RNA sequence: GGGAACGACUCGAGUAGAGUCGAAAAGUGCGAAGCUAUGAACUUUUUGGCGCACACACACGGCCUUUUGUUUGUAGCGUGAAACUACUCCGUGUGUGUGGAGUAGGAAAACAAAGCACGAAAGAAAGGGUAAACAUAUGUUCGCAUAUGUUUACCCAAAAGAAACAACAACAACAAC
Reactivity to DMS in 0.01 (KOAc 150mM, MgCl2 10mM, bicine 150mM(pH8.5), 24C), signal-to-noise 5, nucleotides 027 to 126: g010u000g000c000g010a190a200g010c020u000a010u020g000a020a030c050u000u000u040u030u040g000g030c000g010c020a020c030a030c010a050c110a110c210g020g020c040c040u010u030u000u010g020u000u010u000g010u000a000g010c000g010u040g010a150a070a070c000u010a010c010u000c000c000g000u000g000u010g000u000g010u020g020g000a000g010u000a010g010g000a070a030a120a070c100a030a090a300g010c020a000c000g000a090a070a100g010a110a120a110
Reactivity to 2A3 in 0.01 (KOAc 150mM, MgCl2 10mM, bicine 150mM(pH8.5), 24C), signal-to-noise 7, nucleotides 027 to 126: g000u000g010c010g100a090a040g000c020u030a030u080g040a060a080c040u080u040u020u140u300g040g000c040g010c030a010c000a000c000a000c010a040c080g160g010c010c040u150u220u090u090g060u040u030u050g020u020a000g000c040g010u060g040a040a020a010c000u000a000c000u000c000c020g030u030g020u040g020u030g060u090g030g010a000g000u020a000g000g100a010a100a000a010c040a000a040a000g000c010a000c030g050a040a060a020g160a020a050a030